[RMDB]
RNA sequence: GGGAACGACUCGAGUAGAGUCGAAAAUCUAUGAGCGGAUGUUCUGUGCGGUACCACGAAUGUGCGACGAAUGCCGCGAUCAACGCCAGGCCGGUGAUCGCCGGUAUCAACACGUGCCGAUCGGCCACACGGAUAUCUGGUUCGCCAGAUAUCCGUGAAAAGAAACAACAACAACAAC
Reactivity to DMS in 0.01 (KOAc 150mM, MgCl2 10mM, bicine 150mM(pH8.5), 24C), signal-to-noise 2, nucleotides 027 to 126: u000c030u000a080u000g010a200g030c050g030g010a060u030g010u000u020c020u000g010u010g030c050g000g010u010a100c100c020a070c100g010a060a090u010g000u000g000c020g020a090c100g000a080a130u000g000c020c020g000c000g000a000u000c010a020a040c050g010c050c100a170g000g020c070c010g010g020u020g000a010u000c020g010c130c030g040g010u000a020u000c110a080a070c150a070c070g030u010g000c030c060g000a080u020c040g020g010c030c060a110
Reactivity to 2A3 in 0.01 (KOAc 150mM, MgCl2 10mM, bicine 150mM(pH8.5), 24C), signal-to-noise 3, nucleotides 027 to 126: u040c030u060a120u160g060a020g030c030g110g010a060u060g030u070u060c040u090g130u180g100c060g080g000u060a040c000c000a030c070g090a200a110u150g010u050g050c100g040a060c030g030a130a050u050g050c010c010g020c010g020a010u010c020a020a010c030g020c030c090a140g130g000c130c000g020g020u030g020a010u030c020g070c120c040g030g000u020a030u020c000a010a070c090a020c120g030u040g020c000c040g060a170u120c010g010g000c010c010a010
An RNA of 177 nucleotides, treated with DMS and 2A3 and read out base by base. DMS adducts were read by reverse transcription with MarathonRT. Conditions: 150 mM KOAc, 10 mM MgCl2 and 150 mM bicine (pH 8.5), 24 C. Source: RMDB library OK2TRN, as collected in RNAgym.